Record summary
The record gives the reactivity of an RNA of 177 nucleotides to 2A3 and DMS. The RNA was probed in 150 mM KOAc, 10 mM MgCl2 and 150 mM bicine (pH 8.5) at 24 C. The DMS profile rests on 1,487 reads. For DMS the reverse transcriptase was MarathonRT.

RNA sequence: GGGAACGACUCGAGUAGAGUCGAAAAGUCUAGAGGUUCGCCUCUAGACAAAGAACGCUAAUUCGCUAAGCGAGGCCGCGAGAGCGGCCAUACGCCAAGAAAAAAGAGCCCUGUUCGCAGGGCUCAACCAUACUGUUACGUUCGCGUAACAGUAUGGAAAAGAAACAACAACAACAAC
Reactivity to 2A3 in 0.01 (KOAc 150mM, MgCl2 10mM, bicine 150mM(pH8.5), 24C), signal-to-noise 2, nucleotides 027 to 126: g000u010c000u000a010g000a000g000g030u050u090c170g100c050c000u000c000u020a000g010a000c000a000a020a000g000a080a030c030g000c130u090a150a130u130u100c030g000c100u060a030a050g010c000g010a030g000g000c000c010g010c020g020a010g010a010g190c010g020g000c010c010a010u040a010c010g000c010c030a010a040g120a060a140a020a030a000a030g010a000g010c010c000c000u000g010u030u020c220g000c000a010g020g000g000c000u000c010a010a000
Reactivity to DMS in 0.01 (KOAc 150mM, MgCl2 10mM, bicine 150mM(pH8.5), 24C), signal-to-noise 2, nucleotides 027 to 126: g020u000c010u000a010g010a020g020g000u000u000c300g020c000c000u010c020u000a000g000a000c010a020a080a060g000a110a110c160g010c090u010a060a160u000u000c030g020c060u030a190a100g000c010g030a100g000g000c000c000g010c000g010a170g000a300g020c000g000g020c000c020a000u000a080c040g010c000c120a050a110g020a010a030a060a060a100a150g010a000g020c010c000c000u000g010u000u000c150g010c030a010g010g000g020c010u000c000a010a050